[RMDB]
RNA sequence: GGGAACGACUCGAGUAGAGUCGAAAAAUGGUAGUUAGUCUACUCGCUAUCCUAGUUACUUUGGAGUAAUCUAAAGUGUGUGUAAACGGGCGAAAGUCUGUAAAAUACUGGGGACAUAGGAUCAACAAGAACUAGUAGACCUUCGGGUCUACUAGAACCUACAACAGCAGUUCGCUGCUGUUGUAGGAAAAGAAACAACAACAACAAC
Reactivity to 2A3 in 0.01 (KOAc 150mM, MgCl2 10mM, bicine 150mM(pH8.5), 24C), signal-to-noise 3, nucleotides 027 to 156: a000u080g030g000u030a060g020u150u060a050g050u070c020u020a040c050u060c020g010c020u080a050u110c010c000u030a050g020u040u090a030c000u010u000u020g020g010a000g030u090a140a140u000c020u010a010a000a020g010u040g010u030g000u000g010u080a080a140a070c010g000g000g000c010g050a120a040a020g010u000c010u030g060u100a030a060a030a040u160a030c030u020g030g000g010g010a000c010a070u090a010g100g010a050u070c040a040a130c040a050a080g060a050a040c000u000a000g010u000a000g000a000c000c000u030u030c120g100g000g010u000c000u010a000c000u000a000g000a000a000
Reactivity to DMS in 0.01 (KOAc 150mM, MgCl2 10mM, bicine 150mM(pH8.5), 24C), signal-to-noise 1, nucleotides 027 to 156: a110u010g010g000u010a060g000u000u010a110g000u010c010u000a030c010u010c050g010c030u000a160u000c010c010u020a030g020u010u010a030c010u000u010u000g000g010a000g000u000a150a120u000c030u000a000a010a010g020u000g030u010g030u010g030u000a050a150a100c050g020g000g010c030g010a100a140a190g000u000c010u020g020u020a000a040a080a120u000a030c060u000g030g030g000g020a050c080a060u010a110g020g000a080u000c050a040a110c030a050a090g010a080a220c000u010a000g020u010a010g000a040c000c000u000u000c300g050g030g000u010c000u000a000c010u000a000g010a010a040
Overview
Chemical mapping of a 207-nucleotide RNA with 2A3 and DMS. It was measured as part of the RMDB library M2RFPK. The RNA was probed in 150 mM KOAc, 10 mM MgCl2 and 150 mM bicine (pH 8.5) at 24 C. The DMS profile rests on 2,242 reads. For DMS the reverse transcriptase was MarathonRT.